[RMDB]
RNA sequence: GGGAACGACUCGAGUAGAGUCGAAAAUGCUGUCGUUGACAGCGCCCAACGCUUCACAACCUGAAAGAAGCGCCUGUUAUCAGGACGGUUGAUCCAUUUACCGGUGCAGACCUCUACAAACACCGGGUUUAACAAGCAUCUUUCGAGAUGCUUGUAACCCGAACUCCCUAUUCGUAGGGAGUUCGGGAAAAGAAACAACAACAACAAC
Reactivity to 2A3 in 0.01 (KOAc 150mM, MgCl2 10mM, bicine 150mM(pH8.5), 24C), signal-to-noise 2, nucleotides 027 to 156: u120g010c000u010g010u010c060g300u050u300g010a010c000a000g000c000g010c000c000c000a040a010c000g000c000u020u010c030a030c020a150a000c000c000u000g000a010a000a010g000a000a000g000c020g060c010c000u090g030u220u220a150u300c010a000g000g000a010c020g000g000u000u000g010a050u010c050c020a030u000u020u250a100c000c010g000g000u000g090c040a080g130a270c040c090u160c130u180a110c110a110a120a010c010a000c000c000g000g040g000u070u170u020a000a000c000a000a000g000c000a000u000c010u020u080u150c170g140a030g000a020u000g000c010u000u000g000u000a000a000
Record summary
Source: RMDB library M2RFPK, as collected in RNAgym. Chemical mapping of a 207-nucleotide RNA with 2A3. The RNA was probed in 150 mM KOAc, 10 mM MgCl2 and 150 mM bicine (pH 8.5) at 24 C. Reactivities are given for positions 27 through 156.